RNA sequence: GGGAACGACUCGAGUAGAGUCGAAAAGCGGCAUGUUAGCUUCGCUGCUGGCGCUUGGAACGGUGUCGUCAUUUAACGGUAUGUUGCUGGCGGGAUUUGUCGCGGGGUUGUUUGCGACAGGUGGGCAACGCAGUACAAUAUUCGUAUUGUACUGCGUAAAAGAAACAACAACAACAAC
Reactivity to 2A3 in 0.01 (KOAc 150mM, MgCl2 10mM, bicine 150mM(pH8.5), 24C), signal-to-noise 4, nucleotides 027 to 126: g010c000g050g020c030a060u130g060u160u200a030g020c030u150u090c110g030c040u020g010c010u030g020g030c030g020c020u030u080g040g040a070a040c060g040g050u060g040u050c030g020u030c050a110u110u150u140a060a020c030g000g030u100a090u140g030u050u080g040c030u020g010g020c000g000g010g050a080u110u070u140g020u010c000g010c030g020g000g070g000u050u120g040u040u110u110g010c000g000a010c010a010g010g050u090g020g030g000c010a000
Reactivity to DMS in 0.01 (KOAc 150mM, MgCl2 10mM, bicine 150mM(pH8.5), 24C), signal-to-noise 8, nucleotides 027 to 126: g020c020g010g000c020a040u010g020u010u010a070g010c050u010u000c200g010c040u000g020c040u000g000g010c040g010c040u000u000g010g010a080a090c090g000g010u000g000u000c040g010u010c070a090u010u000u000a060a090c070g000g020u000a060u010g010u000u000g010c070u000g000g020c060g010g010g000a140u000u000u000g010u000c020g020c010g010g000g010g010u000u000g010u000u010u010g020c020g010a040c020a040g000g010u000g000g000g010c130a110
This 177-nucleotide RNA was probed chemically with 2A3 and DMS. For 2A3, 5,793 sequencing reads were counted. DMS adducts were read by reverse transcription with MarathonRT.